About this RNA:
Conditions: 150 mM KOAc, 10 mM MgCl2 and 150 mM bicine (pH 8.5), 24 C. The record gives the reactivity of an RNA of 207 nucleotides to DMS and 2A3. For 2A3 the reverse transcriptase was SuperScript II with manganese. For DMS, 4,718 sequencing reads were counted. It was measured as part of the RMDB library M2RFPK. DMS adducts were read by reverse transcription with MarathonRT.
RNA sequence: GGGAACGACUCGAGUAGAGUCGAAAAAGUUAGGUUCGCUAUGGUGCAACUCUUUAAGGCAAUAACGAACUAAUUCUAAGCAAGUAAUGGAGAAACGCCAGGGUCACUAUCUAGCCAUAAUAGUGCUGUAAGUGACUUAGAUUCGUCUAAGUCACAAGUUCUGCAAUAAGUUCGCUUAUUGCAGAACAAAAGAAACAACAACAACAAC
Reactivity to DMS in 0.01 (KOAc 150mM, MgCl2 10mM, bicine 150mM(pH8.5), 24C), signal-to-noise 2, nucleotides 027 to 156: a080g010u000u010a070g030g010u000u000c020g050c010u000a050u000g000g040u000g020c040a070a210c060u000c090u000u000u000a080a100g010g030c040a100a050u000a020a040c040g020a030a080c020u000a040a080u000u000c070u000a140a130g010c060a070a100g010u000a050a070u010g000g000a110g000a090a110a050c060g010c000c030a060g000g040g010u000c030a090c050u000a040u010c020u000a090g040c080c030a070u000a050a070u000a070g030u010g000c000u000g000u010a030a140g010u010g000a030c000u000u000a010g010a050u000u000c270g040u000c000u000a000a010g000u020c010a010c000a030a150
Reactivity to 2A3 in 0.01 (KOAc 150mM, MgCl2 10mM, bicine 150mM(pH8.5), 24C), signal-to-noise 6, nucleotides 027 to 156: a000g090u100u060a050g020g090u010u020c010g000c030u030a050u070g120g050u100g070c070a110a130c080u100c110u160u180u210a110a060g050g000c010a030a040u050a080a030c030g010a000a000c010u020a020a030u080u060c060u100a020a050g070c050a060a030g040u160a120a040u090g040g020a060g080a090a090a010c030g020c030c020a040g020g010g000u030c010a010c040u010a030u080c030u050a030g010c010c000a030u030a090a050u030a090g060u040g040c060u030g030u110a200a070g010u010g000a000c000u000u000a000g000a000u020u040c080g000u000c130u000a000a000g000u000c000a000c000a000a020